[RMDB]
RNA sequence: GGGAACGACUCGAGUAGAGUCGAAAAAUCACCGGUGGGGAACCCCAUACGGCAACGGCAUAGAAGUAAAUGCUAACCAAUCCGUGGUAUCUACGCGACGGAGCAUCCACGGAUAACUCUAACAAGGCUAAGCGUCUCGGUUUCGACCGAGACGCAAGGGUUUAUUUAGAUUCGUCUAAAUAAACCCAAAAGAAACAACAACAACAAC
Reactivity to 2A3 in 0.01 (KOAc 150mM, MgCl2 10mM, bicine 150mM(pH8.5), 24C), signal-to-noise 1, nucleotides 027 to 156: a010u130c000a010c000c000g000g000u020g000g000g010g070a160a200c070c070c000c030a030u180a190c030g000g040c030a080a050c100g030g090c020a010u010a040g160a190a080g230u120a100a030a090u060g030c020u030a010a060c050c030a050a010u000c000c000g020u000g000g000u080a010u110c000u030a110c060g000c010g170a130c090g070g000a060g060c030a050u000c000c000a000c000g010g000a020u000a010a040c070u120c080u110a110a060c110a090a030g100g040c040u130a070a110g000c000g000u000c040u000c010g190g000u000u060u030c060g000a040c000c010g000a000g090a010c000g000c000a000a000
Annotation:
Chemical mapping of a 207-nucleotide RNA with 2A3. The reactions ran in a buffer of 150 mM KOAc, 10 mM MgCl2 and 150 mM bicine (pH 8.5), at 24 C. The 2A3 profile rests on 565 reads. For 2A3 the reverse transcriptase was SuperScript II with manganese.